[RMDB]
RNA sequence: GGGAACGACUCGAGUAGAGUCGAAAAUCAUCCAAGUUCGCUUGGAUGAAACGGUACUGAAGCAAAAAACGAUCCGAGGCAACAGUACCAUAAAAGGAUCGACAGCCUGCAAAUUCGUUUGCAGGAAUAAGAACACGUCAUUCGUGACGUGUUCUUAAAAAGAAACAACAACAACAAC
Reactivity to DMS in 0.01 (KOAc 150mM, MgCl2 10mM, bicine 150mM(pH8.5), 24C), signal-to-noise 1, nucleotides 027 to 126: u000c000a030u000c000c000a020a000g020u010u010c290g010c000u000u000g000g040a010u010g000a000a060a110c200g000g010u000a010c020u000g010a060a300g020c040a000a030a030a050a140a080c030g020a000u000c020c000g100a180g000g000c000a060a300c040a000g000u000a000c000c000a010u000a020a080a080a080g010g000a030u000c040g020a300c150a160g000c000c010u000g000c000a010a010a020u010u000c130g030u000u000u000g000c020a010g030g010a020a010